[RMDB]
The data come from the RNA Mapping Database (RMDB), library M2RFPK. This 207-nucleotide RNA was probed chemically with 2A3. For 2A3, 1,358 sequencing reads were counted. The RNA was probed in 150 mM KOAc, 10 mM MgCl2 and 150 mM bicine (pH 8.5) at 24 C.
RNA sequence: GGGAACGACUCGAGUAGAGUCGAAAACAGGAAACUGGUUAAUCGUUUUCCUUGGUAGUAUAGAGGAAACCAUAAAUAAGAAGAACUCUAAGUGCUUGAGUAGAGUUAAAAUAAUUAGACAGGCAAUUAAGGUACUCCACGUUCGCGUGGAGUACAACACAACGACAUUCUUCGGAAUGUCGUUGUGAAAAGAAACAACAACAACAAC
Reactivity to 2A3 in 0.01 (KOAc 150mM, MgCl2 10mM, bicine 150mM(pH8.5), 24C), signal-to-noise 2, nucleotides 027 to 156: c000a000g060g050a090a000a030c020u100g060g020u120u150a080a070u220c050g020u000u020u080u050c010c010u020u010g060g010u060a110g060u070a160u130a150g060a020g000g040a060a040a010c040c010a080u120a190a140a030u160a100a050g080a010a030g060a050a020c000u000c000u000a010a020g020u030g140c000u010u000g000a000g010u000a000g010a020g010u140u130a000a040a000a000u050a000a020u190u000a010g020a010c000a010g000g010c000a000a030u190u160a200a010g080g000u000a000c000u000c000c000a000c000g030u030u040c200g010c000g120u000g000g000a010g000u000a000c000a000a000